Structure probing data (2A3 and DMS) for a 207-nucleotide construct. The RNA was probed in 150 mM KOAc, 10 mM MgCl2 and 150 mM bicine (pH 8.5) at 24 C. Values cover nucleotides 27 to 156. DMS adducts were read by reverse transcription with MarathonRT. For DMS, 13,814 sequencing reads were counted.

RNA sequence: GGGAACGACUCGAGUAGAGUCGAAAAUACUUAGUACGCGCGUAGUUGCAGGCAUUCCGGGUGCAGCAACUGACGCGGAAGACUUUUCCCAGAGUCUGCGCUUCAACUGGCGUGCUGAGUAGUGCACGAAUUGCACGUACGUUCGCGUACGUGCAAAUAUGCCAUAUACAUUCGUGUAUAUGGCAUAAAAAGAAACAACAACAACAAC
Reactivity to 2A3 in 0.01 (KOAc 150mM, MgCl2 10mM, bicine 150mM(pH8.5), 24C), signal-to-noise 6, nucleotides 027 to 156: u040a000c010u010u000a000g010u010a010c030g020c040g010c020g190u030a010g010u010u000g000c050a110g090g000c000a020u090u090c120c180g220g050g000u010g000c020a020g000c000a010a000c020u050g070a010c020g000c000g020g010a010a000g010a010c010u070u050u040u020c000c000c000a000g010a000g010u000c010u020g010c020g020c030u130u150c080a230a130c120u160g040g000c010g000u000g000c000u000g000a010g000u030a030g070u090g080c060a020c150g100a160a160u030u010g000c010a000c000g000u000a000c000g010u010u060c210g000c000g080u000a000c000g000u000g000c000a000a000a000
Reactivity to DMS in 0.01 (KOAc 150mM, MgCl2 10mM, bicine 150mM(pH8.5), 24C), signal-to-noise 4, nucleotides 027 to 156: u000a030c030u000u000a030g030u000a040c000g000c000g020c020g020u000a060g020u000u000g010c010a160g010g000c010a040u000u000c020c300g000g040g150u000g010c000a300g000c010a010a020c000u010g000a020c020g020c020g010g000a110a030g000a030c020u000u000u000u000c000c000c010a300g000a040g000u000c000u000g000c020g010c020u000u000c050a130a200c200u000g020g020c010g040u010g010c000u000g020a050g010u000a040g010u010g000c060a110c050g010a080a190u000u000g020c000a000c000g000u000a000c000g000u000u010c300g040c050g010u000a000c010g000u000g000c000a000a010a070